Structure probing data (2A3 and DMS) for a 177-nucleotide construct. In probing experiments dimethyl sulfate is read out at A N1 and C N3, which are open when not base-paired. Reactivities are given for positions 27 through 126. For DMS, 20,163 sequencing reads were counted.
[RMDB]
RNA sequence: GGGAACGACUCGAGUAGAGUCGAAAACCCGUUUUGUUCGCAAAACGGGACUCAUCUUUGCUUGGCAGCAUAGCAGGUGUUGGCUGCACUGCUGGCUUAUCCUUGGAGGCAGUUUCGACUGCCUCAACCUAUCUUAAUAUUUCGAUAUUAAGAUAGGAAAAGAAACAACAACAACAAC
Reactivity to 2A3 in 0.01 (KOAc 150mM, MgCl2 10mM, bicine 150mM(pH8.5), 24C), signal-to-noise 9, nucleotides 027 to 126: c000c000c000g000u020u000u000u000g010u020u060c190g000c100a000a000a000a000c000g000g000g040a050c020u030c070a190u060c080u080u130u110g020c030u070u200g050g000c010a020g000c030a140u100a130g000c010a030g010g080u140g100u300u150g210g090c010u020g010c010a000c010u010g000c000u000g020g010c010u050u100a130u120c030c030u020u120g180g000a000g010g000c000a010g000u010u040u120c130g070a020c000u000g000c000c000u000c000a000a000
Reactivity to DMS in 0.01 (KOAc 150mM, MgCl2 10mM, bicine 150mM(pH8.5), 24C), signal-to-noise 8, nucleotides 027 to 126: c010c000c000g010u000u000u000u000g010u010u010c210g020c010a010a010a010a010c000g010g000g000a110c080u000c120a100u010c090u000u000u000g010c020u000u010g020g000c160a030g020c110a100u010a110g010c020a020g010g010u000g010u000u010g020g010c040u000g000c020a090c040u000g000c010u000g000g000c010u000u000a070u000c040c030u000u000g010g000a020g010g010c000a010g010u000u000u010c160g010a030c000u000g010c000c000u000c000a020a060
Conditions: 150 mM KOAc, 10 mM MgCl2 and 150 mM bicine (pH 8.5), 24 C.